This 207-nucleotide RNA was probed chemically with DMS and 2A3. The 2A3 profile rests on 4,411 reads. The RNA was probed in 150 mM KOAc, 10 mM MgCl2 and 150 mM bicine (pH 8.5) at 24 C.

[RMDB]
RNA sequence: GGGAACGACUCGAGUAGAGUCGAAAACAACCCAACUCCUACUCAAUACGUCCUCGUCGUACAGAACGGUAACAUGUUUUCCGAACAUCCGCUCUUGGGUAUACGAGUAUACACCUUACCCAACCCUCCAACCACCUAAAGUUCGCUUUAGGUGGAACUACAACUCUCUCUUCGGAGAGAGUUGUAGAAAAGAAACAACAACAACAAC
Reactivity to DMS in 0.01 (KOAc 150mM, MgCl2 10mM, bicine 150mM(pH8.5), 24C), signal-to-noise 1, nucleotides 027 to 156: c060a090a300c000c020c030a160a110c050u020c030c040u000a060c030u010c060a050a130u000a110c070g040u000c020c010u000c010g020u000c030g000u000a130c100a100g010a080a070c020g000g000u010a020a030c140a080u000g020u000u000u000u000c120c080g020a090a030c030a200u000c040c010g030c010u000c030u000u000g000g060g000u000a060u000a120c040g010a080g040u010a080u000a050c120a110c000c020u000u000a020c030c020c000a030a150c010c000c000u000c000c100a080a190c000c000a000c000c010u000a000a010a020g020u000u000c300g040c010u000u000u000a010g010g020u000g000g060a000a120
Reactivity to 2A3 in 0.01 (KOAc 150mM, MgCl2 10mM, bicine 150mM(pH8.5), 24C), signal-to-noise 5, nucleotides 027 to 156: c040a020a080c000c010c010a030a070c060u080c010c020u040a090c020u030c060a080a090u080a100c030g030u020c010c010u020c020g050u020c010g020u060a090c020a080g050a080a020c010g100g000u080a110a030c040a100u080g030u020u040u080u080c050c030g020a050a020c030a050u050c020c020g050c050u030c010u080u060g050g010g000u030a030u010a050c070g020a020g070u020a010u040a060c090a070c020c020u030u040a030c000c010c020a020a020c010c000c010u000c010c020a010a100c010c000a000c000c000u010a010a000a000g020u040u080c190g040c130u020u000u000a000g000g000u000g000g000a000a000